Structure probing data (2A3 and DMS) for a 207-nucleotide construct. 2A3 adducts were read by reverse transcription with SuperScript II with manganese. DMS adducts were read by reverse transcription with MarathonRT. Conditions: 150 mM KOAc, 10 mM MgCl2 and 150 mM bicine (pH 8.5), 24 C. The DMS profile rests on 3,490 reads.

RNA sequence: GGGAACGACUCGAGUAGAGUCGAAAAAGGGAGGUACUCAAUUUGGUGGCUACUUUCAGGGGCCCACCUCAGCAGGCCAAGGCAUAGUUGGAGGGACACCAGAUGCUCUGAGCUGGUAUCAGAUCCCUGUUUGCCGCUGGGCAAAGGCAGACAAAAAACGCUCAUUAAAUUUCGAUUUAAUGAGCGUAAAAGAAACAACAACAACAAC
Reactivity to 2A3 in 0.01 (KOAc 150mM, MgCl2 10mM, bicine 150mM(pH8.5), 24C), signal-to-noise 2, nucleotides 027 to 156: a000g020g010g000a040g000g020u050a090c040u030c110a080a150u110u090u150g050g000u070g020g010c030u130a100c050u180u160u150c080a080g070g000g000g000c000c000c000a020c010c000u060c040a030g010c030a030g030g020c010c040a010a020g030g000c040a060u100a130g090u080u090g040g010a010g040g010g000a000c000a030c020c000a000g020a090u070g000c030u020c020u060g050a040g010c010u020g000g040u030a040u100c040a040g060a130u070c010c000c010u020g030u000u030u030g020c020c010g000c040u040g030g060g000c020a060a000a000g010g000c000a000g030a040c000a000a100a040a000a000
Reactivity to DMS in 0.01 (KOAc 150mM, MgCl2 10mM, bicine 150mM(pH8.5), 24C), signal-to-noise 2, nucleotides 027 to 156: a110g000g010g000a070g030g010u010a100c070u000c030a080a080u000u010u010g020g050u000g030g000c060u000a050c030u000u000u000c090a090g040g000g030g010c090c010c020a080c050c010u020c080a100g010c060a070g020g030c000c020a050a130g020g040c030a050u000a140g010u000u010g000g020a110g030g010g020a070c040a090c010c000a060g000a080u000g020c030u000c080u000g010a110g030c040u000g020g040u000a090u010c040a130g010a140u010c010c000c030u000g010u000u000u010g010c010c000g020c070u010g010g040g010c010a050a080a120g010g010c020a050g010a070c010a000a050a080a070a100